Record summary: The record gives the reactivity of an RNA of 177 nucleotides to 2A3. 2A3 adducts were read by reverse transcription with SuperScript II with manganese. Conditions: 150 mM KOAc, 10 mM MgCl2 and 150 mM bicine (pH 8.5), 24 C. The data come from the RNA Mapping Database (RMDB), library OK1LIB.
[RMDB]
RNA sequence: GGGAACGACUCGAGUAGAGUCGAAAAUUACUAUGUAGAUGGACAGAUACCUGUAUAUGUGUACUUUAUAGAUAUAAGUUUAACAAUUAUAUUUGCAGAGCUAUCAUAUCGCUUUAUAGAAACUCCACGACGUGAAUAGUUUCGACUAUUCACGUCGAAAAGAAACAACAACAACAAC
Reactivity to 2A3 in 0.01 (KOAc 150mM, MgCl2 10mM, bicine 150mM(pH8.5), 24C), signal-to-noise 3, nucleotides 027 to 126: u130u050a080c010u010a020u100g040u050a040g040a130u060g090g030a050c060a130g020a010u030a050c000c010u000g040u020a060u020a030u110g110u010g030u050a030c010u070u080u050a200u070a140g040a100u110a030u030a150a040g020u080u030u170a070a010c000a010a020u300u040a080u040a080u100u070u030g000c010a010g010a020g020c030u010a010u060c030a020u000a000u150c010g030c050u100u060u010a040u000a000g040a070a040a000c000u000c020c000a030